[RMDB]
RNA sequence: GGGAACGACUCGAGUAGAGUCGAAAAGGCAGUUUUCGAACUGCCGAACGAGUUAAGAUGUGAUCUUGCUUCCUUAUACAAUUUUGAGAGGUUAAUAAGAAGGAAGUAGUGCUAUCUUAAUAACCCUCUCUGCUAAACCGCGUGGUUCGCCACGCAACCAUUGAGCCUGUUUCGACAGGCUCAAUGGAAAAGAAACAACAACAACAAC
Reactivity to 2A3 in 0.01 (KOAc 150mM, MgCl2 10mM, bicine 150mM(pH8.5), 24C), signal-to-noise 5, nucleotides 027 to 156: g010g010c000a000g000u010u000u010u080c120g080a020a000c010u000g020c000c000g000a020a010c030g050a020g020u020u060a010a020g010a030u060g110u110g300a300u100c010u010u010g000c000u010u010c000c000u020u050a070u050a210c090a120a190u080u120u130u150g010a020g000a000g000g040u060u070a090a070u090a230a040g120a040a010g040g010a000a020g010u010a010g020u020g050c010u010a030u000c000u000u020a020a020u020a040a040c000c030c000u010c000u000c020u020g070c100u150a060a110a100c050c070g000c010g000u010g020g030u050u060c140g020c070c000a000c000g000c000a000a010
Reactivity to DMS in 0.01 (KOAc 150mM, MgCl2 10mM, bicine 150mM(pH8.5), 24C), signal-to-noise 1, nucleotides 027 to 156: g030g040c030a010g010u000u000u000u040c250g030a060a040c000u000g010c000c000g020a020a070c050g010a240g000u000u020a050a000g030a060u000g030u000g020a210u000c010u010u000g000c010u000u000c000c010u000u010a190u030a140c110a070a170u000u000u000u010g000a070g000a000g000g050u000u000a010a180u020a110a140g010a090a090g010g000a090a040g000u010a060g030u000g020c060u000a030u020c030u000u010a030a050u000a090a120c140c010c010u000c050u010c020u000g040c070u000a120a090a100c210c140g000c010g000u000g010g020u000u000c090g010c020c000a010c000g000c010a010a060